This 207-nucleotide RNA was probed chemically with 2A3. 2A3 adducts were read by reverse transcription with SuperScript II with manganese. The reactions ran in a buffer of 150 mM KOAc, 10 mM MgCl2 and 150 mM bicine (pH 8.5), at 24 C.
RNA sequence: GGGAACGACUCGAGUAGAGUCGAAAAGCAUCAGGCAGUAUUUCUGUCACAAGAUUACCUCGUUCCUUGGCAACUGCUCUGCAAAGAGUGUGCCAUCAAGCUUGAAAUGAACUGCCACAUACUUGGAGCACAGUAGCCUUGAGAGGGUCUGAGCUCAGGCAUGCAAAAUCUUCGGAUUUUGCAUGCCAAAAGAAACAACAACAACAAC
Reactivity to 2A3 in 0.01 (KOAc 150mM, MgCl2 10mM, bicine 150mM(pH8.5), 24C), signal-to-noise 1, nucleotides 027 to 156: g010c040a100u130c050a000g060g010c030a000g010u120a130u020u110u080c030u000g150u050c020a020c020a080a030g050a090u190u170a150c020c050u010c000g000u020u000c000c040u000u010g010g000c080a100a050c200u140g020c000u040c020u010g110c110a040a020a000g000a000g000u020g030u020g060c040c000a010u230c120a030a010g020c000u100u100g040a040a050a000u130g030a020a020c000u020g030c000c010a040c030a070u210a060c030u090u150g070g000a000g000c000a010c000a040g010u090a090g040c000c030u160u080g140a190g010a040g170g010g000u000c010u020g000a010g000c010u010c010a010